[RMDB]
Source: RMDB library POS240, as collected in RNAgym. This 307-nucleotide RNA was probed chemically with 2A3 and DMS. For DMS, 6,706 sequencing reads were counted. Values cover nucleotides 27 to 266. For DMS the reverse transcriptase was MarathonRT.
RNA sequence: GGGAACGACUCGAGUAGAGUCGAAAAAGCGCCAUGUACGCAUGGCGCAAGGACCAGGAUGAUGACUGGCCAAAUCCAGCUGGUGAUGGAGCCGGAGGCGCGCGGUGACCGGAGGCGGUGGCCUGUCGUGCUGGCAGAAAUUGCGGAGCAUGGUGGCCGGUCCGCAAUGAUAAUCUCAUCACAACAGCAGGUCGAUCUUCAGUGUAGACCUGAACAUGAAAAUACUAAAACUCUGAACUGAUUUAGAUCGGAUUACGAUCCGAUCAACAGGUGCAUUCGUGCACCUGAAAAGAAACAACAACAACAAC
Reactivity to 2A3 in 0.01 (KOAc 150mM, MgCl2 10mM, bicine 150mM(pH8.5), 24C), signal-to-noise 4, nucleotides 027 to 266: a000g000c010g000c010c010a010u000g030u030a030c240g000c110a000u000g000g000c000g000c010a000a020g020g000a040c000c020a030g100g020a080u160g010a030u140g010a030c050u020g000g020c010c000a060a070a010u060c030c000a010g030c010u060g010g030u010g020a020u040g020g020a030g040c050c060g100g150a090g130g020c010g000c010g000c010g010g030u030g140a030c000c010g050g070a080g070g170c030g000g010u020g050g000c010c000u060g140u260c010g000u020g000c070u230g010g010c040a010g270a060a100a000u070u020g010c010g020g030a020g010c060a110u150g030g030u020g060g000c020c000g010g010u000c000c010g000c030a060a090u090g050a050u110a130a090u050c060u040c070a070u050c030a030c030a160a190c020a080g060c020a010g000g030u000c010g010a040u030c110u070u040c060a020g030u020g020u120a020g000a000c000c000u030g010a030a040c020a030u110g100a110a070a110a060u170a060c060u120a050a070a140a090c150u180c080u170g070a100a040c020u080g080a120u120u100u180a040g010a000u010c010g000g000a010u020u010a050c140g020a010u000c000c000g000a000u010c000a000a020
Reactivity to DMS in 0.01 (KOAc 150mM, MgCl2 10mM, bicine 150mM(pH8.5), 24C), signal-to-noise 3, nucleotides 027 to 266: a140g020c020g000c000c010a000u000g000u000a100c200g030c000a010u000g010g010c000g030c000a020a020g010g000a160c020c020a080g010g000a060u000g010a080u010g000a090c020u000g020g010c000c040a060a120a100u020c020c040a090g000c080u010g020g010u010g000a040u000g000g010a300g030c020c040g010g000a240g000g000c050g030c050g010c070g030g020u000g000a050c020c020g000g000a170g010g010c000g000g040u010g000g010c020c000u010g030u040c030g030u000g000c010u000g050g000c040a070g000a110a100a060u010u010g000c000g040g010a040g000c010a050u000g010g010u000g000g000c020c010g010g000u000c000c130g000c110a060a030u000g000a090u000a080a100u010c140u010c040a040u010c040a100c170a110a110c140a080g000c020a010g000g030u010c010g000a210u020c100u010u000c030a020g000u000g000u000a270g000a030c020c010u000g000a050a050c120a120u000g000a110a080a060a060u030a080c120u030a070a020a100a110c110u010c060u010g000a080a050c220u000g000a050u000u020u020a130g010a010u010c000g010g000a010u000u000a110c190g010a070u000c000c000g000a030u000c020a100a130